RNA sequence: GGGAACGACUCGAGUAGAGUCGAAAAGCUGAGGAGUGAUGACAUAAAAGGCCGAAUUGCAGUGUCUCCAUCAACAGUUGGCUCUCUGAGCACACGAUGACAAAACCUCCUGAAGCGAGUCACUGUCCUAAUGAUCGUGUUUCGACACGAUCAUUAGAAAAGAAACAACAACAACAAC
Reactivity to DMS in 0.01 (KOAc 150mM, MgCl2 10mM, bicine 150mM(pH8.5), 24C), signal-to-noise 8, nucleotides 027 to 126: g000c020u010g010a070g000g010a040g010u020g000a090u010g010a070c120a070u020a050a080a100a100g000g020c030c080g010a070a110u020u020g010c080a090g000u010g010u010c000u000c040c050a080u000c060a070a100c130a100g020u020u010g000g000c000u000c010u030c120u060g010a050g020c020a050c050a060c070g010a070u010g000a100c150a050a060a090a130c150c010u000c030c020u010g000a080a050g020c050g000a060g010u000c060a080c060u010g000u000c090
Reactivity to 2A3 in 0.01 (KOAc 150mM, MgCl2 10mM, bicine 150mM(pH8.5), 24C), signal-to-noise 9, nucleotides 027 to 126: g030c030u030g010a010g020g010a010g020u100g060a120u090g030a040c020a070u240a080a140a030a050g090g000c030c040g090a130a120u140u170g010c050a040g020u020g010u050c000u000c030c010a060u050c030a030a110c020a060g040u130u110g030g000c010u000c010u000c070u140g030a020g040c040a020c010a010c130g070a070u080g020a020c040a030a080a020a040c000c000u030c000c000u080g040a080a010g030c040g030a010g000u020c010a010c090u040g060u080c000